[RMDB]
Source: RMDB library OK1LIB, as collected in RNAgym. An RNA of 177 nucleotides, treated with DMS and 2A3 and read out base by base. High DMS reactivity at an A or C suggests that its Watson-Crick edge is free. The 2A3 profile rests on 1,874 reads. The reactions ran in a buffer of 150 mM KOAc, 10 mM MgCl2 and 150 mM bicine (pH 8.5), at 24 C.
RNA sequence: GGGAACGACUCGAGUAGAGUCGAAAAGCACUGGAGGCCAAGCAGGCUCAAGCGGAGCAGGGGGUCAAAGAGACAAAGACGUUGACGCUGGCUCAACAGGGAAGAUAUCAGUGCCAAAGCUUAAGGCGUUCCAGAAUCCUUUCGAGGAUUCUGGAACAAAAGAAACAACAACAACAAC
Reactivity to DMS in 0.01 (KOAc 150mM, MgCl2 10mM, bicine 150mM(pH8.5), 24C), signal-to-noise 2, nucleotides 027 to 126: g020c040a070c020u000g000g010a090g000g040c040c020a190a120g030c070a130g080g000c040u000c050a140a230g030c240g000g000a070g020c060a080g030g030g000g010g000u000c000a020a040a050g030a090g000a140c180a030a030a050g000a010c050g000u000u030g030a130c040g000c060u000g000g000c000u000c040a000a030c040a100g000g030g010a100a080g000a070u040a070u000c080a010g000u000g000c000c040a050a080a140g000c070u030u050a080a040g000g020c130
Reactivity to 2A3 in 0.01 (KOAc 150mM, MgCl2 10mM, bicine 150mM(pH8.5), 24C), signal-to-noise 3, nucleotides 027 to 126: g000c000a000c010u010g000g080a050g000g040c030c000a070a000g060c090a120g060g000c020u050c060a060a010g030c080g120g000a040g020c020a070g010g000g000g060g010u020c000a050a020a030g120a000g010a030c020a050a140a040g060a040c120g040u010u090g020a020c040g000c130u030g050g000c000u030c070a000a090c020a060g030g090g000a020a020g050a000u130a090u180c060a020g080u020g000c000c030a000a120a000g040c040u110u080a130a000g120g000c040